Notes
The record gives the reactivity of an RNA of 207 nucleotides to DMS and 2A3.

[RMDB]
RNA sequence: GGGAACGACUCGAGUAGAGUCGAAAAGCGUAUGAUGUGAACGAUUUGAGAGACAAGAUAAAACCUGGCGAUAAGUUCAUCAUCAGACAAGGAGAUCUAAUCGUGGCGAACUAUUCAAUAGACUAUCCAAGGCGCAGAGGUCUACGUUAUGCACACCAUAAGAUGCACCUUUCGAGGUGCAUCUUAUAAAAGAAACAACAACAACAAC
Reactivity to DMS in 0.01 (KOAc 150mM, MgCl2 10mM, bicine 150mM(pH8.5), 24C), signal-to-noise 1, nucleotides 027 to 156: g020c100g000u000a090u010g020a070u030g050u000g010a030a060c030g000a090u030u000u000g020a120g000a300g010a130c020a090a060g020a190u010a110a120a100a160c040c030u010g040g000c080g020a110u010a070a100g000u000u020c050a020u010c020a000u000c020a050g130a050c010a050a050g000g000a120g050a070u010c020u000a000a160u000c010g010u000g020g000c010g050a040a080c090u000a100u010u000c130a060a120u020a020g020a090c070u000a130u000c020c100a070a160g000g020c010g030c070a110g010a070g000g000u000c050u000a020c040g010u000u000a070u000g060c110a080c000a060c050c030
Reactivity to 2A3 in 0.01 (KOAc 150mM, MgCl2 10mM, bicine 150mM(pH8.5), 24C), signal-to-noise 2, nucleotides 027 to 156: g090c040g010u150a010u060g020a010u000g020u010g020a050a010c050g050a100u030u040u190g080a100g020a020g030a040c080a090a040g050a130u150a130a130a040a040c030c030u020g040g000c040g020a040u010a100a100g000u000u030c010a090u010c000a010u000c010a000g040a090c070a010a060g030g000a050g020a030u000c040u120a120a040u060c050g060u080g000g030c000g060a010a040c010u060a140u070u110c000a050a030u030a060g040a000c030u040a070u050c000c030a050a030g030g000c030g000c060a000g030a000g020g000u000c010u060a020c040g020u060u050a020u050g070c010a010c000a010c170c010
For DMS the reverse transcriptase was MarathonRT. In probing experiments dimethyl sulfate is read out at A N1 and C N3, which are open when not base-paired. For DMS, 1,602 sequencing reads were counted. The 2A3 profile rests on 1,006 reads.